An RNA of 170 nucleotides, treated with 2A3 and DMS and read out base by base. For DMS, 5,611 sequencing reads were counted. Source: RMDB library 15KLIB, as collected in RNAgym. For DMS the reverse transcriptase was MarathonRT.
RNA sequence: GGGAACGACUCGAGUAGAGUCGAAAACCGGGGGGAGGCGGGGUAAACCCAUACUAUGGGAACUGCUGGGUUCCUCGGAUGUCGAUCCCCUCUCCCGUUCGGGAAAAGGGGGACUCCGGAACUCCCUAAGCCUGCAGCUUCGGCUGCAGGAAAAGAAACAACAACAACAAC
Reactivity to 2A3 in 0.01 (KOAc 150mM, MgCl2 10mM, bicine 150mM(pH8.5), 24C), signal-to-noise 3, nucleotides 027 to 129: c010c000g000g000g000g000g000g000a020g010g020c030g000g000g000g050u050a050a090a000c000c030c000a030u120a200c100u130a130u100g000g010g060a130a000c020u130g060c030u040g000g050g000u040u030c000c000u000c010g000g000a040u140g040u040c010g040a160u100c020c010c000c000u000c010u000c010c020c010g090u280u240c100g000g000g000a030a050a030a000g010g000g010g010g010a010c010u000c010c000g000g020a000a000c020u050c000c000c000u020a050a000g040
Reactivity to DMS in 0.01 (KOAc 150mM, MgCl2 10mM, bicine 150mM(pH8.5), 24C), signal-to-noise 2, nucleotides 027 to 129: c000c020g000g000g000g000g000g000a030g060g070c060g040g000g000g110u000a060a090a120c010c040c010a060u000a130c200u040a130u030g000g000g030a030a030c050u040g050c140u050g000g020g040u060u030c030c000u050c030g050g000a020u150g020u000c050g020a130u120c030c030c020c000u000c140u020c020c000c010g040u090u040c250g010g060g020a030a010a090a120g030g000g050g010g000a010c050u040c000c000g060g000a000a090c020u020c030c000c060u060a050a020g000